[RMDB]
RNA sequence: GGGAACGACUCGAGUAGAGUCGAAAAAUAAAUAACGCGAAGAAGCAGAGAAAGGACUGCAAGAACGCGAAUACACCAACGUCAAGAACAGCAGGAAGGAGCUGAAAAAGACGAAACACCAAAAAAACCAUAAUCUAUAGUUCGCUAUAGAUUAUGGAAAAGAAACAACAACAACAAC
Reactivity to DMS in 0.01 (KOAc 150mM, MgCl2 10mM, bicine 150mM(pH8.5), 24C), signal-to-noise 2, nucleotides 027 to 126: a110u010a120a060a130u000a080a180c060g010c050g010a000a060g000a170a300g010c000a010g000a070g030a100a110a160g000g010a130c000u000g020c020a090a160g000a140a110c020g040c010g000a100a130u000a040c140a090c090c040a070a120c050g010u000c070a080a100g020a110a110c000a020g000c000a080g000g010a080a110g000g000a120g000c020u000g000a020a040a060a090a160g000a020c020g020a040a070a040c110a080c150c070a000a000a040a110a050a140a110
Reactivity to 2A3 in 0.01 (KOAc 150mM, MgCl2 10mM, bicine 150mM(pH8.5), 24C), signal-to-noise 3, nucleotides 027 to 126: a000u080a000a050a010u120a090a020c020g020c030g040a300a080g030a120a010g030c020a000g010a020g100a170a230a070g120g090a050c000u000g000c010a040a020g050a100a000c000g000c020g020a010a010u060a070c060a010c030c010a040a040c020g030u020c030a080a020g050a140a090c010a010g050c010a010g020g070a140a030g060g090a060g000c000u000g030a110a030a020a010a020g010a000c030g030a060a050a010c060a040c050c080a120a070a040a000a000a020a060